Structure probing data (2A3) for a 207-nucleotide construct. It was measured as part of the RMDB library M2RFOK. The 2A3 profile rests on 671 reads.
RNA sequence: GGGAACGACUCGAGUAGAGUCGAAAAGCUCUGGAAUUGAGGCCCCUCUAACAAUAAUCCAAAACUACUUCGCUGAGUAAUCUGCCGAAUCGUAGGAUGCCCAUUACUAUCUAUUUUUGGAGCAUCUAAAACUGUCAGUGCUUCGGCACUGACAGAACGAUAACUCUGGGUUCGCCCAGAGUUAUCGAAAAGAAACAACAACAACAAC
Reactivity to 2A3 in 0.01 (KOAc 150mM, MgCl2 10mM, bicine 150mM(pH8.5), 24C), signal-to-noise 2, nucleotides 027 to 156: g010c020u020c040u020g050g160a150a100u180u050g010a030g050g000c020c000c010c020u050c050u100a110a100c070a060a110u190a020a040u030c050c000a000a080a040a050c020u070a030c010u060u020c030g020c020u000g000a010g120u160a160a080u030c020u020g080c070c020g010a010a050u090c040g030u030a020g030g020a000u010g000c020c000c000a010u040u020a100c070u130a070u100c050u030a190u110u090u010u010u040g010g000a120g000c000a010u000c010u030a030a030a000a080c000u000g000u000c000a000g000u010g040c000u020u080c160g030g000c000a010c000u000g000a000c000a000g000a000a000